[RMDB]
Conditions: 150 mM KOAc, 10 mM MgCl2 and 150 mM bicine (pH 8.5), 24 C. The record gives the reactivity of an RNA of 177 nucleotides to DMS and 2A3. For DMS, 29,416 sequencing reads were counted. The 2A3 profile rests on 18,635 reads. For 2A3 the reverse transcriptase was SuperScript II with manganese.

RNA sequence: GGGAACGACUCGAGUAGAGUCGAAAAGCUCGGUGACACCGCGUCUGCCUGGGUCCGAAAGAUUUCUUGUCGCAAAUCUACAAGACAUUGGUUAACGUGUGGGCCGCUUGAGCGGCCGCUCGGCGGGAGUUGGGUGGGUGUUCGCGCCUAUCCAACUAAAAGAAACAACAACAACAAC
Reactivity to DMS in 0.01 (KOAc 150mM, MgCl2 10mM, bicine 150mM(pH8.5), 24C), signal-to-noise 8, nucleotides 027 to 126: g020c020u000c030g000g010u000g010a110c090a110c040c020g010c030g000u010c080u010g010c010c020u010g010g010g010u010c010c030g010a120a130a080g010a040u000u010u000c020u010u020g020u020c150g000c180a020a050a060u030c020u010a050c130a130a060g000a030c050a060u010u000g010g010u010u020a080a110c020g000u000g010u010g010g010g010c000c000g010c010u020u040g000a070g010c000g000g010c040c020g010c010u010c020g000g000c010g000g010g000
Reactivity to 2A3 in 0.01 (KOAc 150mM, MgCl2 10mM, bicine 150mM(pH8.5), 24C), signal-to-noise 8, nucleotides 027 to 126: g020c010u010c020g020g030u040g030a020c010a020c040c010g010c000g020u010c030u040g020c000c000u030g060g000g010u010c000c010g060a090a050a010g010a010u020u010u010c020u040u120g090u080c040g020c100a020a030a060u030c020u030a030c010a060a000g010a000c020a030u020u070g040g010u050u100a050a010c020g010u020g010u090g040g050g000c000c000g010c020u110u190g020a020g010c000g010g010c010c010g000c010u020c020g040g000c010g010g030g010